Source: RMDB library OK2TRN, as collected in RNAgym.
This 177-nucleotide RNA was probed chemically with DMS and 2A3.
The DMS profile rests on 1,007 reads.
2A3 adducts were read by reverse transcription with SuperScript II with manganese.

[RMDB]
RNA sequence: GGGAACGACUCGAGUAGAGUCGAAAACAGUGUUCAACACAGUGAGAGUAGUGCUUCGCCUAGCGAAAAGGUAGUUGCAGACUUAAAUGCACGCUUGGCACGAGCAAAAAUGAACAUAGAUAGAUCACGUUCGUCAGUAUUUCGAUACUGACGAACGAAAAGAAACAACAACAACAAC
Reactivity to DMS in 0.01 (KOAc 150mM, MgCl2 10mM, bicine 150mM(pH8.5), 24C), signal-to-noise 2, nucleotides 027 to 126: c100a190g010u000g000u020u030c020a020a110c110a070c110a130g040u020g000a190g030a140g020u000a050g030u000g020c000u000u010c080g000c000c080u000a040g030c030g030a130a070a080a160g000g000u010a050g020u020u000g020c080a060g000a080c150u030u000a020a080a100u000g030c040a080c040g070c020u000u020g000g000c000a030c170g000a070g000c110a020a030a070a060a090u000g000a050a020c110a020u010a020g010a080u010a070g000a140u000c090a170
Reactivity to 2A3 in 0.01 (KOAc 150mM, MgCl2 10mM, bicine 150mM(pH8.5), 24C), signal-to-noise 2, nucleotides 027 to 126: c000a000g060u000g030u040u070c040a060a010c020a010c050a150g030u080g140a150g030a010g090u200a020g070u050g000c000u050u060c040g000c010c040u040a060g060c040g090a050a090a030a050g200g030u160a050g030u110u070g020c040a010g030a070c040u110u240a070a050a000u040g000c040a010c010g000c000u020u000g030g050c020a010c130g000a010g090c040a020a060a040a000a010u080g000a000a010c000a000u000a050g130a040u170a030g110a060u080c060a010
DMS adducts were read by reverse transcription with MarathonRT.